[RMDB]
RNA sequence: GGGAACGACUCGAGUAGAGUCGAAAAGGUGGCUCGCUCCCGUGAGAAUUAAGAGACGACUCCGAGUCACCGAUUUAGCAUGUUCGUCCUACGAAAGUGCCUCACAGGGAGUAGGACGUUCAUGCGAGGGAUGCAGUAGCUUCGGCUAUUGCAUCCCAAAAGAAACAACAACAACAAC
Reactivity to DMS in 0.01 (KOAc 150mM, MgCl2 10mM, bicine 150mM(pH8.5), 24C), signal-to-noise 5, nucleotides 027 to 126: g010g020u000g010g000c010u000c020g020c260u010c020c010c050g010u040g010a090g020a120a090u020u010a130a110g010a090g030a120c120g010a150c060u000c130c000g010a010g000u000c000a010c000c000g010a030u050u010u030a120g000c010a000u000g000u000u000c000g000u000c000c010u000a010c020g000a150a160a100g010u020g010c120c060u040c040a120c100a130g000g030g020a280g010u000a000g000g000a000c000g010u000u010c030a000u000g000c020g030a070
Reactivity to 2A3 in 0.01 (KOAc 150mM, MgCl2 10mM, bicine 150mM(pH8.5), 24C), signal-to-noise 9, nucleotides 027 to 126: g010g000u000g000g000c010u010c010g020c040u070c020c020c010g050u130g040a130g060a080a210u280u200a180a050g070a020g010a100c070g050a060c040u010c020c010g000a010g000u000c000a000c000c000g000a000u010u020u090a010g000c000a000u000g000u000u010c000g000u000c000c000u000a000c010g090a130a080a060g170u180g150c030c010u160c020a130c060a100g070g000g020a070g010u000a000g000g000a000c000g000u010u000c000a000u000g000c000g000a100

Background: Chemical mapping of a 177-nucleotide RNA with DMS and 2A3. The reactions ran in a buffer of 150 mM KOAc, 10 mM MgCl2 and 150 mM bicine (pH 8.5), at 24 C. Reactivities are given for positions 27 through 126. The DMS profile rests on 9,915 reads. 2A3 adducts were read by reverse transcription with SuperScript II with manganese. DMS adducts were read by reverse transcription with MarathonRT.